[RMDB]
Chemical mapping of a 170-nucleotide RNA with 2A3 and DMS. The DMS profile rests on 14,590 reads. DMS adducts were read by reverse transcription with MarathonRT. In probing experiments dimethyl sulfate is read out at A N1 and C N3, which are open when not base-paired. Conditions: 150 mM KOAc, 10 mM MgCl2 and 150 mM bicine (pH 8.5), 24 C.
RNA sequence: GGGAACGACUCGAGUAGAGUCGAAAAUGGGCAACAUUCCGAGGGGACCGUCCCCUCGGUAAUGGCGAAUGGGACCCAGAACUCUCUCUAGAUUCCCAGAGAGAAUCGAGAGAAAACUGGCUCUCCCUGGGGAGUCACUUCGGUGACUCCAAAAGAAACAACAACAACAAC
Reactivity to 2A3 in 0.01 (KOAc 150mM, MgCl2 10mM, bicine 150mM(pH8.5), 24C), signal-to-noise 4, nucleotides 027 to 129: u090g040g040g020c040a080a020c000a070u020u000c000c000g000a000g010g000g000g010a050c050c060g300u300c010c000c000c010u000c010g000g010u000a000a000u010g010g000c020g040a080a060u030g000g020g010a020c100c000c000a010g000a030a060c020u000c000u000c000u010c010u020a040g000a020u000u000c000c020c130a040g040a010g000a000g000a110a000u010c020g000a000g000a010g000a040a020a010a020c000u000g000g030c000u000c000u000c020c010c000u030g020g040
Reactivity to DMS in 0.01 (KOAc 150mM, MgCl2 10mM, bicine 150mM(pH8.5), 24C), signal-to-noise 5, nucleotides 027 to 129: u060g010g030g030c090a080a120c020a000u000u000c000c010g030a000g050g020g010g020a300c200c300g080u080c030c060c000c000u050c020g000g000u010a000a030u010g040g030c130g000a130a050u030g010g050g040a060c170c000c020a030g000a040a210c140u030c030u010c000u000c020u080a110g050a010u000u030c030c030c150a130g000a100g020a120g020a020a020u000c000g000a020g070a050g070a040a030a090a080c020u030g000g000c060u020c000u000c000c010c060u000g080g020